[RMDB]
Record summary
The record gives the reactivity of an RNA of 177 nucleotides to 2A3 and DMS.

RNA sequence: GGGAACGACUCGAGUAGAGUCGAAAAAAAAAGAUAUGGAUUAGCGACGAAGUCCUUGAGUGGAUGUACAUCGGAAACGAUGUACUAAUCCACAAUGAUGGGACAGAGCUAAUCCUAAGUCAAAAAACACCAUGUUAAGGUUCGCCUUAACAUGGUGAAAAGAAACAACAACAACAAC
Reactivity to 2A3 in 0.01 (KOAc 150mM, MgCl2 10mM, bicine 150mM(pH8.5), 24C), signal-to-noise 2, nucleotides 027 to 126: a000a000a000a000a000g120a060u150a070u120g000g000a010u000u000a010g050c040g300a300c120g110a300a030g010u010c010c020u040u040g050a030g000u010g000g020a010u030g010u000a000c000a030u000c000g020g020a070a080a030c010g000a000u010g000u000a000c010u010a000a030u000c010c000a010c000a020a250u100g010a010u010g020g010g000a000c030a000g000a000g000c000u010a000a000u010c000c000u010a070a040g020u010c080a000a000a130a000a110a000
Reactivity to DMS in 0.01 (KOAc 150mM, MgCl2 10mM, bicine 150mM(pH8.5), 24C), signal-to-noise 2, nucleotides 027 to 126: a090a080a140a120a070g000a050u010a300u010g000g000a000u000u000a020g000c020g010a190c220g000a150a100g000u010c000c010u000u000g000a100g010u000g000g000a010u000g000u000a000c010a000u000c000g010g010a100a100a180c010g000a000u000g010u000a010c030u000a100a100u000c000c000a020c000a160a070u030g020a110u000g000g010g020a000c000a020g010a120g000c000u000a010a010u010c000c010u000a020a050g010u000c040a000a000a090a060a070a080
The DMS profile rests on 1,984 reads. The RNA was probed in 150 mM KOAc, 10 mM MgCl2 and 150 mM bicine (pH 8.5) at 24 C. DMS adducts were read by reverse transcription with MarathonRT. The data come from the RNA Mapping Database (RMDB), library TTRDES. Values cover nucleotides 27 to 126.